Annotation:
Chemical mapping of a 207-nucleotide RNA with DMS and 2A3. For 2A3 the reverse transcriptase was SuperScript II with manganese. Values cover nucleotides 27 to 156.
RNA sequence: GGGAACGACUCGAGUAGAGUCGAAAAGCGUACUACUUCGAUGAGGCAGCUUGGAUUUAUGGGUCUCUAGCGUGUUGCUUCCCAAAUAGGAAGCAAUCGGGCCCAUUGUCAGCUGACAAAUCGAAGUAUCGCAAAGCACGGAGUUCGCUCCGUGCAACUCCUUAGAGUAGUUCGCUACUCUAAGGAGAAAAGAAACAACAACAACAAC
Reactivity to DMS in 0.01 (KOAc 150mM, MgCl2 10mM, bicine 150mM(pH8.5), 24C), signal-to-noise 2, nucleotides 027 to 156: g010c030g020u000a060c120u000a020c000u000u000c020g010a020u000g000a300g010g000c010a030g010c000u000u030g040g030a060u000u010u010a020u000g020g140g000u000c010u000c090u020a140g030c150g010u020g020u000u000g020c000u000u000c000c000c010a030a140a230u000a060g010g000a040a010g020c010a010a010u000c010g010g000g000c000c000c000a030u000u000g010u000c030a040g020c000u010g000a020c000a010a150a030u000c010g000a020a070g000u000a000u010c030g000c010a080a100a120g000c000a010c030g010g010a060g010u000u010c300g010c030u010c000c010g010u000g000c010a030a030
Reactivity to 2A3 in 0.01 (KOAc 150mM, MgCl2 10mM, bicine 150mM(pH8.5), 24C), signal-to-noise 8, nucleotides 027 to 156: g010c010g050u100a090c040u010a000c000u020u000c010g000a010u010g010a030g160g010c000a000g010c020u140u220g110g020a070u190u300u140a020u050g020g000g030u020c070u040c140u290a110g140c100g100u250g020u080u010g000c000u010u020c010c030c010a120a210a020u200a040g000g000a000a010g000c010a000a010u030c010g000g010g000c010c000c000a000u000u010g000u000c000a000g000c000u000g080a060c000a000a060a010u010c000g000a000a000g000u000a000u030c000g010c020a040a090a010g000c000a000c010g000g000a010g010u100u160c180g080c150u000c000c000g000u000g000c000a000a010